RNA sequence: GGGAACGACUCGAGUAGAGUCGAAAAGACAAGAAUAAGAGGGACAAGAAUCUGACCUGCAGCUCCUCGUGGUGUCCCUCGGAAACGUGCUCAACGCGCGUCCGACGCAGGCAGAAAGUAAGAAGAAAUCAGUGGCACUAUUCGUAGUGCCACUGAUAAAAGAAACAACAACAACAAC
Reactivity to 2A3 in 0.01 (KOAc 150mM, MgCl2 10mM, bicine 150mM(pH8.5), 24C), signal-to-noise 2, nucleotides 027 to 126: g090a050c100a000a110g260a000a160u200a190a000g010a010g040g020g020a030c050a020a020g020a040a270u020c010u050g200a300c000c000u000g000c010a040g030c020u020c000c020u000c070g020u070g000g000u050g000u000c010c000c000u000c000g000g000a030a050a000c000g030u000g020c000u110c240a180a110c160g000c000g080c030g040u000c000c000g000a020c160g000c000a000g000g030c020a000g020a050a040a000g040u170a020a030g040a090a000g040a000a270
Reactivity to DMS in 0.01 (KOAc 150mM, MgCl2 10mM, bicine 150mM(pH8.5), 24C), signal-to-noise 1, nucleotides 027 to 126: g000a140c180a180a110g000a140a250u040a020a020g010a050g000g000g000a050c000a020a110g010a000a030u010c000u050g000a000c000c000u020g000c010a150g000c240u000c030c000u000c130g020u060g000g000u000g100u000c020c030c030u000c000g010g010a020a080a000c050g000u000g030c000u020c210a120a060c230g080c000g060c000g000u020c020c000g020a050c260g000c000a010g000g010c000a010g000a200a110a010g070u030a020a030g050a020a120g000a050a170
Chemical mapping of a 177-nucleotide RNA with 2A3 and DMS. For 2A3 the reverse transcriptase was SuperScript II with manganese.